[RMDB]
RNA sequence: GGGAACGACUCGAGUAGAGUCGAAAACUCACUCACUACGGUGAGUGAGAAUGCUUAAGCCUCAAUAAAGCUUGGCUUGAGUGCCUCAAGCAGAUAUAGACUGAAACAUUUAGUAUGGCCAAGCAGGGAGCAACGGCACGAGUACGCUCGUGCCGAAUCCUAUUACGUCAUUCGUGACGUAAUAGGAAAAAGAAACAACAACAACAAC
Reactivity to 2A3 in 0.01 (KOAc 150mM, MgCl2 10mM, bicine 150mM(pH8.5), 24C), signal-to-noise 4, nucleotides 027 to 156: c000u000c000a000c000u000c000a000c000u040a020c250g080g000u000g000a000g000u000g000a000g000a020a040u040g000c010u040u030a020a010g010c000c000u010c020a060a130u120a150a170a020g010c000u010u010g000g000c000u000u040g020a020g000u120g030c010c010u060c070a050a000g000c010a010g130a080u100a030u100a180g130a090c040u100g080a070a080a020c050a060u080u140u080a100g050u100a110u160g050g000c000c010a000a010g000c010a020g030g030g020a100g060c050a070a070c040g000g000c010a000c010g000a000g000u020a010c190g000c120u000c000g000u000g000c000c000g000a000a010
Reactivity to DMS in 0.01 (KOAc 150mM, MgCl2 10mM, bicine 150mM(pH8.5), 24C), signal-to-noise 3, nucleotides 027 to 156: c010u000c000a020c000u000c010a030c020u000a130c300g130g010u000g000a070g000u000g020a020g010a030a090u000g000c020u000u000a070a080g030c010c000u000c060a080a070u000a080a120a120g010c000u000u000g000g010c020u010u000g030a110g020u000g020c040c010u000c050a170a110g010c010a190g010a230u020a170u010a120g000a100c020u000g000a090a070a050c040a050u010u000u020a090g010u010a110u000g020g050c010c000a020a030g000c030a170g000g010g000a100g020c020a080a160c020g020g000c000a020c000g020a050g010u000a090c300g060c020u000c000g010u000g000c000c000g000a010a040